[RMDB]
RNA sequence: GGGAACGACUCGAGUAGAGUCGAAAAGAAUCUCACUUGGGUGGGGAUUUAUUCGGGUGAUUUAGUGACUCCAGCGCGUAUUAGUGAGAUUAUGAAUACGUUGAAAUGAUUACGCGCAAAGUAACAAGGGAUUAUAAUUCUUCGGAAUUAUAAUCCCAAAAGAAACAACAACAACAAC
Reactivity to 2A3 in 0.01 (KOAc 150mM, MgCl2 10mM, bicine 150mM(pH8.5), 24C), signal-to-noise 3, nucleotides 027 to 126: g040a010a050u010c000u000c000a010c050u070u090g120g130g000u190g040g020g110g010a000u290u110u020a070u080u160c050g010g050g000u110g070a170u030u110u120a080g000u080g060a070c000u050c050c040a040g000c000g000c010g000u000a040u040u000a040g000u040g030a000g020a000u080u120a050u050g100a000a030u200a090c130g020u090u020g020a060a060a060u090g040a100u020u090a000c000g000c000g000c010a000a180a040g040u180a060a100c110a080a110
Reactivity to DMS in 0.01 (KOAc 150mM, MgCl2 10mM, bicine 150mM(pH8.5), 24C), signal-to-noise 3, nucleotides 027 to 126: g000a040a020u010c020u000c010a020c000u020u000g010g020g000u040g000g000g000g020a080u020u020u020a030u040u010c070g000g000g000u000g010a070u030u030u020a050g010u000g020a080c060u040c090c080a150g000c000g040c000g030u000a000u010u010a080g000u000g000a150g020a020u000u010a110u000g000a070a150u040a060c270g010u000u000g000a190a080a060u030g000a050u010u010a010c020g000c030g000c010a080a010a060g020u050a040a040c210a050a130